RNA sequence: GGGAACGACUCGAGUAGAGUCGAAAAAGAACCAUUGCUGAAAAUCGUCCUCUGACAAUUGCUCACAUGCCUCCCCAUGUGGACUGUGGUACAUGUGCACACAUGACACACAAGAAUGCAUGCACACCAGGACAAAGGUGUUCGCACCUUUGUCCUGAAAAGAAACAACAACAACAAC
Reactivity to 2A3 in 0.01 (KOAc 150mM, MgCl2 10mM, bicine 150mM(pH8.5), 24C), signal-to-noise 2, nucleotides 027 to 126: a000g030a010a000c020c000a050u010u100g010c040u030g040a080a070a120a120u100c010g020u070c000c020u040c030u060g020a030c040a090a140u090u090g020c040u070c010a040c020a090u080g030c000c020u000c000c000c030c010a010u000g000u010g030g010a020c010u030g010u020g000g060u040a080c000a020u030g050u070g070c090a010c000a000c000a120u030g020a030c010a000c000a000c000a240a020g050a070a020u100g010c040a020u050g040c020a020c010a010c130
Reactivity to DMS in 0.01 (KOAc 150mM, MgCl2 10mM, bicine 150mM(pH8.5), 24C), signal-to-noise 2, nucleotides 027 to 126: a070g000a090a120c070c030a120u000u000g030c060u010g000a070a070a070a140u000c110g030u000c030c040u000c080u000g000a080c090a020a060u000u000g020c030u010c040a000c070a040u010g000c120c040u000c020c000c010c000a070u000g020u000g000g000a150c050u000g000u000g000g040u000a130c050a030u000g010u000g020c140a070c070a050c040a010u000g000a120c100a100c030a020c110a070a050g000a110a090u000g000c050a020u000g040c100a070c120a090c170

Structure probing data (2A3 and DMS) for a 177-nucleotide construct. The RNA was probed in 150 mM KOAc, 10 mM MgCl2 and 150 mM bicine (pH 8.5) at 24 C. For 2A3 the reverse transcriptase was SuperScript II with manganese. The data come from the RNA Mapping Database (RMDB), library OK2TRN. For DMS the reverse transcriptase was MarathonRT.